[RMDB]
RNA sequence: GGGAACGACUCGAGUAGAGUCGAAAAGUCGACUGGAGCGAAGCUUGCGACCGCGGCGGACCGGGGCUGCUACUGCGCGCCAAGCACGCGGUGUUCGACCGGCUGGUCUACCGCAAGCUGCGUGCGGUACGAUCCGGUAUUUCGAUACCGGAUCGUAAAAAGAAACAACAACAACAAC
Reactivity to DMS in 0.01 (KOAc 150mM, MgCl2 10mM, bicine 150mM(pH8.5), 24C), signal-to-noise 4, nucleotides 027 to 126: g020u000c050g010a100c090u000g000g000a300g000c020g000a070a080g000c050u000u000g010c030g000a090c060c080g000c060g000g000c050g010g000a080c090c060g000g000g010g020c070u000g020c070u010a050c050u000g020c010g020c010g000c030c120a060a090g010c020a070c220g010c000g000g010u000g000u000u010c150g010a040c010c020g010g010c170u010g010g010u000c020u010a070c220c000g010c000a120a150g010c000u010g000c010g030u010g010c060g010g010
Reactivity to 2A3 in 0.01 (KOAc 150mM, MgCl2 10mM, bicine 150mM(pH8.5), 24C), signal-to-noise 3, nucleotides 027 to 126: g050u020c010g030a080c030u110g000g050a070g040c010g050a070a020g010c020u040u040g010c040g030a050c030c030g010c010g040g010c050g020g010a020c030c040g030g000g030g010c050u100g010c010u090a090c050u120g030c010g000c020g050c060c110a040a000g000c020a040c130g000c000g000g000u020g080u040u040c030g020a050c000c010g080g140c210u270g050g020u040c010u020a040c010c030g010c010a020a010g000c000u000g000c010g010u010g000c030g000g010